An RNA of 177 nucleotides, treated with 2A3 and DMS and read out base by base.
[RMDB]
RNA sequence: GGGAACGACUCGAGUAGAGUCGAAAACGCGAGGACUGUCCUCGCCGCCGUCGCGGGCAGUGUCUAGCCAGGCCUUGACAAGCUAGCCGGAGGAGCGCCUAGGAACCCGAGCCGGAGCUCAGCGAGCCCUGAGAAUUUGAUUCGUCAAAUUCUCAGGAAAAGAAACAACAACAACAAC
Reactivity to 2A3 in 0.01 (KOAc 150mM, MgCl2 10mM, bicine 150mM(pH8.5), 24C), signal-to-noise 3, nucleotides 027 to 126: c040g000c010g000a020g020g020a080c090u120g090u170c000c000u000c010g000c000c020g030c010c030g060u080c020g000c030g020g030g000c010a020g040u040g030u060c020u030a020g010c010c030a060g000g040c000c010u060u100g040a040c010a060a010g020c010u050a010g020c010c000g020g010a050g020g030a060g020c030g020c010c020u060a070g040g040a070a080c020c010c020g000a020g020c010c010g030g020a030g000c000u010c040a030g040c020g060a020g000c000
Reactivity to DMS in 0.01 (KOAc 150mM, MgCl2 10mM, bicine 150mM(pH8.5), 24C), signal-to-noise 5, nucleotides 027 to 126: c140g010c010g000a030g010g010a300c140u020g010u020c010c010u000c000g000c010c060g010c040c030g010u010c060g010c090g000g000g010c070a050g010u010g010u010c030u010a100g000c020c050a090g020g010c040c020u000u000g000a100c120a090a120g000c030u000a100g010c020c020g000g000a130g000g000a080g010c080g010c020c020u010a090g010g020a060a120c030c020c020g000a090g010c020c010g010g000a100g000c020u000c030a100g000c040g000a090g000c120
Source: RMDB libraries RFM100 and RFMREP, as collected in RNAgym.